[RMDB]
RNA sequence: GGGAACGACUCGAGUAGAGUCGAAAACGUGUUCGCGUCCGGCGGUCUGGUCGGGUCUGGGUCCACGCCGCUCAUGUCCGAUGACCCCACUCUGUGCACGUACACGCUGCCUGCUGGCGCGAAGAACCACCAGAACAUCGUGGCCGCCCUCACCGCGGCAGCAUAACAAUUUCGAUUGUUAUGCUGCAAAAGAAACAACAACAACAAC
Reactivity to 2A3 in 0.01 (KOAc 150mM, MgCl2 10mM, bicine 150mM(pH8.5), 24C), signal-to-noise 6, nucleotides 027 to 156: c040g020u040g060u060u020c010g010c030g050u080c090c030g020g000c100g000g030u040c080u160g080g010u030c030g010g010g040u050c030u030g040g000g010u040c080c050a100c100g050c110c030g020c020u030c020a040u140g020u000c000c010g040a090u100g030a030c020c000c020c010a030c030u120c070u110g080u080g020c030a030c110g040u130a030c050a010c050g040c030u050g010c000c010u090g030c050u040g010g000c010g000c040g040a030a030g040a050a020c040c030a020c000c020a030g050a080a040c030a090u080c050g050u040g020g010c010c020g020c000c010c000u030c020a050c020c060g040c030g090
Reactivity to DMS in 0.01 (KOAc 150mM, MgCl2 10mM, bicine 150mM(pH8.5), 24C), signal-to-noise 2, nucleotides 027 to 156: c040g030u020g030u000u000c030g040c040g020u000c010c040g050g010c040g020g020u000c050u010g040g020u000c020g030g020g030u000c070u010g020g030g020u000c050c060a100c120g020c060c100g020c040u000c080a050u010g020u010c040c020g000a130u010g000a070c010c000c000c040a040c040u000c020u000g000u000g020c040a040c130g010u000a090c040a030c030g030c050u000g000c040c020u010g000c030u000g010g000c000g030c050g000a040a120g010a130a080c020c020a060c010c010a070g000a090a100c060a130u000c060g010u000g000g010c020c010g000c020c010c030u000c040a100c060c050g010c040g020
An RNA of 207 nucleotides, treated with 2A3 and DMS and read out base by base. Values cover nucleotides 27 to 156. Conditions: 150 mM KOAc, 10 mM MgCl2 and 150 mM bicine (pH 8.5), 24 C. For DMS, 7,829 sequencing reads were counted.